[RMDB]
RNA sequence: GGGAACGACUCGAGUAGAGUCGAAAAACGAGUCCGUACGCGGACUCGAAGGGCCCCAGAAGACCAAGGGACCCAAACCUACCACUCAUUAGAUGCAUGGAAAUCACUAGGUGAUACGUCACCUAGAACACGCUUUUAAGCUUCGGCUUAAAAGCAAGAUAUGUUCCGACUUCGGUCGGAACAUAUCAAAAGAAACAACAACAACAAC
Reactivity to 2A3 in 0.01 (KOAc 150mM, MgCl2 10mM, bicine 150mM(pH8.5), 24C), signal-to-noise 2, nucleotides 027 to 156: a000c000g000a000g000u010c040c000g040u020a020c280g000c010g050g010a000c010u000c000g020a010a000g000g000g000c020c000c000c000a060g130a300a060g040a150c040c090a150a060g030g000g000a070c000c000c000a060a110a040c010c000u060a110c000c040a100c040u100c000a080u080u300a090g050a140u130g050c130a080u080g070g070a080a070a050u160c100a070c100u000a010g000g000u000g010a010u000a060c190g010u000c000a000c000c000u000a000g000a020a000c050a030c070g000c000u000u000u000u000a010a000g000c000u000u130c190g060g020c000u020u000a000a000a000a030g020c020a000a000